[RMDB]
RNA sequence: GGGAACGACUCGAGUAGAGUCGAAAACAUCGAGAUGGAAGGUCCAACGCACCCAAAACCCUCUAAAGAUAAGACUUUCUCGUGGGACCUAAUGAUUCUGGUGGGGGUCUUAUUAAGACUAGACGUGCGUACAUGAGGAUUUCGAUCCUCAUGUACGAAAAGAAACAACAACAACAAC
Reactivity to DMS in 0.01 (KOAc 150mM, MgCl2 10mM, bicine 150mM(pH8.5), 24C), signal-to-noise 3, nucleotides 027 to 126: c040a060u020c030g020a060g020a040u010g010g010a110a120g000g040u000c010c050a010a060c080g040c220a050c000c040c030a010a090a160a100c050c040c020u000c020u000a090a080a130g030a030u000a020a050g000a010c010u010u020u010c030u020c030g000u000g010g000g010a030c030c020u000a090a080u040g030a110u010u010c010u000g030g020u010g010g010g000g000g010u000c000u000u000a020u010u000a090a080g000a090c090u000a030g010a080c110g010u010g000
Reactivity to 2A3 in 0.01 (KOAc 150mM, MgCl2 10mM, bicine 150mM(pH8.5), 24C), signal-to-noise 7, nucleotides 027 to 126: c040a060u070c060g090a020g020a090u120g060g150a110a030g020g000u030c040c000a020a040c040g010c030a070c010c020c000a020a100a050a140c020c020c010u060c040u090a160a140a010g060a030u020a050a010g010a020c000u030u090u010c030u050c050g090u070g010g010g020a010c010c010u020a070a120u210g150a080u050u020c010u030g030g000u030g010g000g000g000g000u000c000u000u030a060u030u110a120a030g070a050c040u060a050g030a100c040g110u120g030
This 177-nucleotide RNA was probed chemically with DMS and 2A3. For 2A3 the reverse transcriptase was SuperScript II with manganese. Conditions: 150 mM KOAc, 10 mM MgCl2 and 150 mM bicine (pH 8.5), 24 C. DMS (dimethyl sulfate) methylates the pairing face of unpaired adenines and cytosines. The DMS profile rests on 4,954 reads. The data come from the RNA Mapping Database (RMDB), library OK1LIB.